Structure probing data (DMS and 2A3) for a 177-nucleotide construct. DMS adducts were read by reverse transcription with MarathonRT.
RNA sequence: GGGAACGACUCGAGUAGAGUCGAAAACACCCGCUUACCAAACCUUAUCAAACUCCGAAUACCGUGCAAUGGAACGUGGCAGUGAGACAGUGGGGGAUAAGCUUCAUUGUCGAGAGGGAAACAACCCCAAGCAGAUCAAAUUCGUUUGAUCUGCUUGAAAAGAAACAACAACAACAAC
Reactivity to DMS in 0.01 (KOAc 150mM, MgCl2 10mM, bicine 150mM(pH8.5), 24C), signal-to-noise 7, nucleotides 027 to 126: c180a160c010c000c020g000c090u010u000a070c070c050a050a110a100c110c030u020u000a050u010c040a070a100a110c050u000c030c020g010a090a080u000a080c050c020g010u010g010c060a090a050u020g000g010a070a070c100g030u010g000g000c040a040g010u010g000a150g000a020c030a030g010u000g000g000g010g020g000a120u010a060a100g010c020u000u000c030a040u010u010g010u010c020g010a080g020a080g000g000g000a110a090a070c140a050a110c070c020c000
Reactivity to 2A3 in 0.01 (KOAc 150mM, MgCl2 10mM, bicine 150mM(pH8.5), 24C), signal-to-noise 9, nucleotides 027 to 126: c080a070c000c010c000g000c060u080u100a070c020c010a110a080a040c010c010u080u070a070u110c040a050a070a080c040u030c040c020g070a090a050u090a150c010c010g030u040g070c060a070a120u150g040g050a060a040c040g030u060g040g000c030a050g020u020g080a050g010a020c010a020g010u020g000g010g010g000g040a070u070a190a060g040c000u020u020c000a030u010u020g030u020c020g010a020g010a040g110g010g030a040a070a020c060a030a070c010c010c000
The RNA was probed in 150 mM KOAc, 10 mM MgCl2 and 150 mM bicine (pH 8.5) at 24 C.